The record gives the reactivity of an RNA of 207 nucleotides to 2A3. For 2A3 the reverse transcriptase was SuperScript II with manganese.

RNA sequence: GGGAACGACUCGAGUAGAGUCGAAAAUAUUGACCGCAUAUAUCUGUCGUAAAAACGCACUUUUACAAAUCAAUAAGUCUUUGACAAUUGAUGGGACAAACAUAUCUGCCAAUCUUUCUUGUACACAUCUUGUCAUUCAAAUUCCGAAAGUCAUUCACGUGCUCGUGAUAUUCGUAUCACGAGCACGAAAAGAAACAACAACAACAAC
Reactivity to 2A3 in 0.01 (KOAc 150mM, MgCl2 10mM, bicine 150mM(pH8.5), 24C), signal-to-noise 1, nucleotides 027 to 156: u140a010u000u080g030a030c060c000g000c050a000u060a000u070a010u030c060u020g120u100c020g050u080a000a000a000a000a070c010g020c060a050c000u000u000u000u110a080c060a040a090a040u120c040a000a000u190a220a000g010u000c030u060u190u190g010a010c010a030a080u030u050g020a010u010g040g030g100a040c020a050a060a000c010a040u070a050u060c080u050g040c000c050a130a210u020c070u050u140u000c070u000u060g060u090a050c100a000c000a040u050c010u100u000g060u090c010a040u030u100c020a030a040a170u020u050c050c000g090a070a070a060g110u200c070a150u170u140c200a010